[RMDB]
RNA sequence: GGGAACGACUCGAGUAGAGUCGAAAACAGAAUCACUUCGGUGAUUCUGAAAGAAAGAAGAAAAGGCGCGACGACGAGCGCGAAAUAAAUAAAUCGUCGUAAAAAUCGAGUCCUUCGGGACUCGAAACACAUAAUCUUCCUUCGGGAAGAUUAUGUGAAAAGAAACAACAACAACAAC
Reactivity to 2A3 in 0.01 (KOAc 150mM, MgCl2 10mM, bicine 150mM(pH8.5), 24C), signal-to-noise 3, nucleotides 027 to 126: c000a000g010a000a000u010c010a010c020u030u110c210g090g010u010g000a000u010u000c000u020g000a000a010a010g080a010a050a010g110a040a020g100a030a110a010a010g170g000c020g000c000g040a010c010g000a000c000g000a000g000c010g000c010g000a010a110a000u130a010a040a010u110a020a080a020u010c000g000u010c000g000u010a030a050a000a010a000u020c000g000a000g000u010c000c010u090u120c180g070g010g000a000c010u000c000g000a000a010a000
Reactivity to DMS in 0.01 (KOAc 150mM, MgCl2 10mM, bicine 150mM(pH8.5), 24C), signal-to-noise 2, nucleotides 027 to 126: c010a020g010a010a000u010c000a000c000u000u030c190g030g020u010g010a000u000u000c000u010g010a050a070a090g010a090a080a120g000a160a110g000a100a090a160a090g000g020c000g000c010g010a000c000g000a010c000g020a010g010c010g020c010g000a030a080a070u010a040a060a030u000a050a040a060u000c000g000u000c000g000u000a040a050a030a100a100u000c000g000a000g000u000c000c000u010u020c300g030g000g000a000c010u000c000g000a000a050a160
Conditions: 150 mM KOAc, 10 mM MgCl2 and 150 mM bicine (pH 8.5), 24 C. Structure probing data (2A3 and DMS) for a 177-nucleotide construct. It was measured as part of the RMDB library M2PK50. High 2A3 reactivity points to a flexible backbone, as in loops and unpaired stretches.